[RMDB]
RNA sequence: GGGAACGACUCGAGUAGAGUCGAAAAUUAGAUUGGACUUCAAAGUAUCUGCUCCAGAUGACGCUGGCAUUGGGAGGAGGGCAUGAUAAUCCCUAACAUCCACACAGGGACAACAGCACUUGGAGGCGGUACAGUCGAUUUUCGAAUCGACUGUACCAAAAGAAACAACAACAACAAC
Reactivity to DMS in 0.01 (KOAc 150mM, MgCl2 10mM, bicine 150mM(pH8.5), 24C), signal-to-noise 2, nucleotides 027 to 126: u000u020a090g000a150u000u010g020g020a010c040u020u000c060a060a070a170g010u020a080u000c020u000g000c090u020c010c120a070g000a100u000g020a070c080g000c080u000g030g020c100a030u000u000g010g040g000a040g010g000a100g020g000g020c050a120u010g000a020u010a080a130u000c010c010c000u000a040a180c150a080u000c060c020a070c130a030c130a140g000g000g010a060c080a010a060c100a040g000c070a070c030u010u020g030g000a030g020g030c180
Reactivity to 2A3 in 0.01 (KOAc 150mM, MgCl2 10mM, bicine 150mM(pH8.5), 24C), signal-to-noise 1, nucleotides 027 to 126: u050u010a050g060a060u040u140g130g030a030c030u080u050c150a020a130a030g020u020a140u070c030u100g050c040u040c050c040a030g030a110u010g050a060c060g010c170u100g020g110c040a090u070u150g060g020g000a030g030g030a000g000g010g000c020a040u050g040a030u120a100a070u150c000c040c000u060a090a040c040a110u060c040c010a110c000a010c010a060g070g000g000a020c020a070a010c000a070g010c020a000c030u010u060g080g000a020g080g000c070